This 177-nucleotide RNA was probed chemically with 2A3 and DMS. The RNA was probed in 150 mM KOAc, 10 mM MgCl2 and 150 mM bicine (pH 8.5) at 24 C. It was measured as part of the RMDB library TTRDEL. For DMS, 2,598 sequencing reads were counted.
[RMDB]
RNA sequence: GGGAACGACUCGAGUAGAGUCGAAAAGAUAUGGAUAUAUCCACCAGUUCUUGGAUUUAUCGGAAACGAUUGUCAGAACGUGGAGUAUAUCCUAAGUCAAACAGCUAUGUCUUCGGACAUAGCUGAAGAGCUUAGAUAUCUUCGGAUAUCUAAGCUCAAAAGAAACAACAACAACAAC
Reactivity to 2A3 in 0.01 (KOAc 150mM, MgCl2 10mM, bicine 150mM(pH8.5), 24C), signal-to-noise 3, nucleotides 027 to 126: g030a020u070a030u150g010g020a010u010a000u010a010u050c000c010a000c040c060a050g020u030u010c030u180u300g160g020a070u300u300u280a030u100c020g000g000a090a040a030c020g010a020u010u020g020u030c020a000g000a010a000c020g000u000g000g020a040g080u030a000u000a000u040c000c000u010a120a020g060u020c030a070a080a110c000a020g000c000u000a000u000g000u000c010u040u100c250g010g000a000c000a000u000a000g000c000u000g000a000a010
Reactivity to DMS in 0.01 (KOAc 150mM, MgCl2 10mM, bicine 150mM(pH8.5), 24C), signal-to-noise 3, nucleotides 027 to 126: g000a030u000a300u010g000g000a020u000a000u000a010u010c020c010a030c030c260a200g020u000u000c000u000u000g020g000a010u000u010u000a010u000c000g000g010a080a090a210c000g010a010u000u000g000u000c020a010g000a010a010c000g030u000g010g000a040g010u010a010u000a000u000c000c000u010a040a120g010u000c040a110a100a290c000a010g010c000u000a000u000g000u000c000u000u000c200g030g010a020c000a000u000a000g000c000u000g000a040a080